[RMDB]
Record summary: Structure probing data (DMS and 2A3) for a 207-nucleotide construct. Source: RMDB library OK3TST, as collected in RNAgym. DMS adducts were read by reverse transcription with MarathonRT. For DMS, 6,096 sequencing reads were counted. The RNA was probed in 150 mM KOAc, 10 mM MgCl2 and 150 mM bicine (pH 8.5) at 24 C.
RNA sequence: GGGAACGACUCGAGUAGAGUCGAAAAGGGUUUGAGCCAUCGCCCGAAUACGAUGGAUGAUACAAGUCGACAUUGUACGCGACGUAGUACGUACUCAUUAGUGCGAAAGCACGGUUAGUCCGACUGGGCAGGGACGAUCUUCUGUCAAUACUUAGAAAUCAGCGUAUAGUUUCGACUAUACGCUGAUAAAAGAAACAACAACAACAAC
Reactivity to DMS in 0.01 (KOAc 150mM, MgCl2 10mM, bicine 150mM(pH8.5), 24C), signal-to-noise 3, nucleotides 027 to 156: g000g010g020u000u000u000g000a150g030c000c000a070u000c000g040c000c000c150g000a110a120u000a020c010g000a060u030g010g000a120u000g030a180u000a080c120a080a080g040u000c000g020a050c040a120u000u000g020u000a030c060g010c040g010a090c060g030u000a120g010u000a040c020g030u000a020c030u010c110a110u000u000a090g020u000g020c000g000a150a110a220g000c010a020c020g050g030u000u000a090g000u000c040c020g000a090c040u000g010g000g010c030a070g010g000g000a080c120g010a080u010c060u000u000c020u000g010u000c020a060a090u000a110c050u020u010a110g010a080a130
Reactivity to 2A3 in 0.01 (KOAc 150mM, MgCl2 10mM, bicine 150mM(pH8.5), 24C), signal-to-noise 3, nucleotides 027 to 156: g080g010g020u030u140u220g120a040g040c000c020a000u000c020g040c010c080c020g040a080a050u100a040c030g000a000u030g050g010a030u100g020a030u060a120c070a110a080g010u020c000g040a020c070a090u080u190g040u110a020c100g000c020g010a030c060g010u010a010g020u020a070c030g000u010a010c010u010c050a040u030u040a120g000u000g020c000g000a110a010a010g000c010a000c000g000g000u030u040a010g000u010c020c010g000a040c030u040g010g010g010c030a080g030g000g030a030c060g090a120u040c000u170u040c030u070g070u080c000a000a160u050a170c050u110u050a080g100a010a190